Source: RMDB library 15KLIB, as collected in RNAgym. An RNA of 170 nucleotides, treated with DMS and 2A3 and read out base by base. The RNA was probed in 150 mM KOAc, 10 mM MgCl2 and 150 mM bicine (pH 8.5) at 24 C. 2A3 adducts were read by reverse transcription with SuperScript II with manganese.

[RMDB]
RNA sequence: GGGAACGACUCGAGUAGAGUCGAAAAUCUUGUUUUAUAGAACGUGUGGAUUGGGAUAUAGAGUAUCCUUAUAUCUCACAUGAAAAGAAAUUGAAUUCCUGUUGUAGAAUCGUUGAGCGCAACGUCGAAGCGGAGUUCUUCGGAACUCCGAAAAGAAACAACAACAACAAC
Reactivity to DMS in 0.01 (KOAc 150mM, MgCl2 10mM, bicine 150mM(pH8.5), 24C), signal-to-noise 3, nucleotides 027 to 129: u000c050u030u040g010u010u000u130u030a060u010a100g020a100a120c040g010u010g120u080g000g000a070u080u000g000g000g000a040u050a030u000a110g000a170g010u020a000u000c000c000u000u060a040u150a020u000c000u010c020a000c040a040u060g000a020a060a090a140g000a000a000a090u000u080g000a090a080u000u000c020c000u090g030u000u000g010u010a050g020a180a140u040c180g060u060u000g040a120g050c160g000c150a080a050c070g000u150c000g000a120a000g000
Reactivity to 2A3 in 0.01 (KOAc 150mM, MgCl2 10mM, bicine 150mM(pH8.5), 24C), signal-to-noise 2, nucleotides 027 to 129: u110c000u000u120g160u000u070u130u050a300u000a060g120a200a050c020g000u000g020u020g020g000a010u000u000g000g000g070a000u000a010u030a120g220a050g170u000a000u060c020c000u050u000a290u100a020u000c160u100c010a000c010a000u000g050a020a180a000a000g010a030a060a040u190u160g000a030a070u000u000c010c010u000g040u060u030g000u000a040g100a200a050u070c010g010u000u110g000a010g060c030g000c040a020a020c050g030u040c120g030a020a000g090